RNA sequence: GGGAACGACUCGAGUAGAGUCGAAAAGAUAUGGAUUGUCAAGCCGAAGAACGGAUAACACAUCGGAAACGAUGUGCUAAUACGGGAGGCUUGUCAAUCCUAAGUCAAACAAGCGUUCGCGCUUGAACUCUGUCUUAGACUUCGGUCUAAGACAGAGAAAAGAAACAACAACAACAAC
Reactivity to DMS in 0.01 (KOAc 150mM, MgCl2 10mM, bicine 150mM(pH8.5), 24C), signal-to-noise 2, nucleotides 027 to 126: g000a030u000a300u010g020g010a040u010u000g000u000c000a010a020g000c000c010g000a150a090g040a150a160c020g000g000a010u000a040a030c000a010c010a000u000c010g040g000a110a080a170c030g020a000u010g010u000g020c010u000a080a080u010a120c000g010g000g010a230g010g000c000u000u000g020u000c010a000a000u000c000c000u000a000a070g000u000c020a090a100a240c030a010a020g010c000g020u000u030c230g020c020g000c010u000u000g000a090a180
Reactivity to 2A3 in 0.01 (KOAc 150mM, MgCl2 10mM, bicine 150mM(pH8.5), 24C), signal-to-noise 2, nucleotides 027 to 126: g020a000u080a030u140g010g000a000u000u000g020u020c000a000a000g000c000c000g110a170a040g010a120a060c010g000g050a040u070a140a040c000a010c000a010u000c020g030g010a030a060a030c010g000a000u010g000u010g000c000u040a080a080u290a180c030g030g000g000a050g000g000c000u000u000g000u000c000a000a010u010c000c000u000a020a010g000u010c060a110a100a150c000a010a050g000c030g060u170u300c300g000c020g040c200u030u020g050a080a050
Source: RMDB library TTRDEL, as collected in RNAgym. An RNA of 177 nucleotides, treated with DMS and 2A3 and read out base by base. Values are in units of 0.01, from 0 to 300, in steps of 10. The DMS profile rests on 1,476 reads. For DMS the reverse transcriptase was MarathonRT. The reactions ran in a buffer of 150 mM KOAc, 10 mM MgCl2 and 150 mM bicine (pH 8.5), at 24 C.